[RMDB]
RNA sequence: GGGAACGACUCGAGUAGAGUCGAAAACAGAUGAUAGAAUCGCGGUUGAACGUAAAAGAUCAGCUUUAACUACGCCGUGUAAUAGCCAUAUGAGUGAAAACGGCACAAGCCUUAUGAGUGAAAACGGCACAAGCCUUAUGAGUGAAAACGGCACAAGACCUAUGGAUGUGUUCGCACAUCCAUAGGUAAAAGAAACAACAACAACAAC
Reactivity to DMS in 0.01 (KOAc 150mM, MgCl2 10mM, bicine 150mM(pH8.5), 24C), signal-to-noise 2, nucleotides 027 to 156: c060a080g000a040u000g030a130u010a090g010a070a110u000c010g010c060g040g000u000u020g050a070a080c070g030u000a070a090a100a120g000a110u010c040a110g000c010u000u000u000a030a090c130u000a160c070g000c000c020g040u000g030u000a030a090u010a270g030c040c020a160u010a130u000g000a150g050u000g000a040a110a150a090c070g000g020c000a040c050a050a110g020c030c030u000u110a030u010g000a110g020u020g000a050a040a070a060c060g040g030c020a050c070a060a170g010c000c020u010u000a050u000g010a110g000u020g050a040a040a070a030c020g000g010c000a100c060a060a090g000
Reactivity to 2A3 in 0.01 (KOAc 150mM, MgCl2 10mM, bicine 150mM(pH8.5), 24C), signal-to-noise 4, nucleotides 027 to 156: c030a010g090a130u090g040a020u130a140g120a120a050u070c030g000c030g050g010u020u070g040a100a040c040g030u130a060a080a050a020g030a030u110c040a030g040c050u090u160u150a100a060c070u110a040c110g000c010c020g020u000g030u040a100a120u030a070g000c000c010a020u050a040u140g090a110g040u050g020a020a050a070a020c030g010g010c060a010c020a020a030g020c000c010u120u130a050u130g060a060g090u090g040a090a070a000a000c020g020g000c040a020c030a010a030g000c020c000u060u110a070u140g070a090g040u060g000a020a000a060a000c010g020g000c020a000c020a110a030g100